This 177-nucleotide RNA was probed chemically with 2A3 and DMS.
For 2A3 the reverse transcriptase was SuperScript II with manganese.
[RMDB]
RNA sequence: GGGAACGACUCGAGUAGAGUCGAAAAUUUGGUCGGGAUUGUAGUUUGAAGAUGUGCUCUUUUGAGCAGUCUCAACUUUGCUCGUUCCCGUUAUGGGAAAAAUUUUGGAAGGUCUUGGUAGGAACGGCCUUGUAGAUCUGUUCGCAGAUCUACAAGGAAAAGAAACAACAACAACAAC
Reactivity to 2A3 in 0.01 (KOAc 150mM, MgCl2 10mM, bicine 150mM(pH8.5), 24C), signal-to-noise 2, nucleotides 027 to 126: u070u030u090g030g010u060c000g000g000g000a020u050u130g060u090a050g020u040u030u160g070a090a020g010a040u160g080u050g300c000u000c000u000u290u210u300g000a020g000c010a000g010u010c000u000c000a010a010c000u050u020u070g020c020u000c020g020u010u000c020c000c000g020u120u120a220u210g000g020g000a000a010a040a030a070u050u130u040u110g080g010a060a010g000g000u010c030u130u070g010g030u060a040g040g000a070a030c010g070g000
Reactivity to DMS in 0.01 (KOAc 150mM, MgCl2 10mM, bicine 150mM(pH8.5), 24C), signal-to-noise 2, nucleotides 027 to 126: u000u000u000g010g020u010c030g010g010g010a080u000u000g010u000a030g000u000u000u010g010a070a070g010a030u000g010u000g040c000u010c010u000u000u000u010g020a010g020c010a150g000u000c010u000c010a020a020c030u000u000u000g000c070u010c040g000u000u000c000c000c000g020u000u010a070u020g010g000g010a010a070a060a040a100u000u000u000u000g010g020a090a070g000g000u000c090u000u000g010g020u000a050g000g010a080a110c110g010g010

DMS adducts were read by reverse transcription with MarathonRT. The reactions ran in a buffer of 150 mM KOAc, 10 mM MgCl2 and 150 mM bicine (pH 8.5), at 24 C.